[RMDB]
RNA sequence: GGGAACGACUCGAGUAGAGUCGAAAAUGGUCCAUCGAGAGAGUUCCAGCAACCGACGAGUCUUCAUUCUGCAACGUUAAGAAACAAAACAAUGUCAACGUGCUGCCAAACUAUAUAAAUCUGGCCAAUAAAAUGUAACGUACGACCUUCUCUCGGUGAAAGCUGGAUUGUUCGCAAUCCAGCUUUCAAAAGAAACAACAACAACAAC
Reactivity to 2A3 in 0.01 (KOAc 150mM, MgCl2 10mM, bicine 150mM(pH8.5), 24C), signal-to-noise 1, nucleotides 027 to 156: u080g060g020u010c010c000a020u040c050g000a020g000a000g000a010g040u000u100c000c020a080g060c020a050a040c030c000g160a050c040g020a050g030u000c050u070u050c090a040u010u070c030u130g040c030a030a080c050g020u040u060a090a030g060a080a060a050c170a070a020a020a040c090a190a220u140g040u060c070a020a000c000g000u000g080c010u000g010c000c010a060a000a120c050u100a160u140a090u100a300a060a100u040c030u000g000g000c050c010a020a070u090a150a040a010a010u170g060u130a020a000c010g020u050a020c030g000a000c000c000u050u000c000u000c000u000c000g020g000u020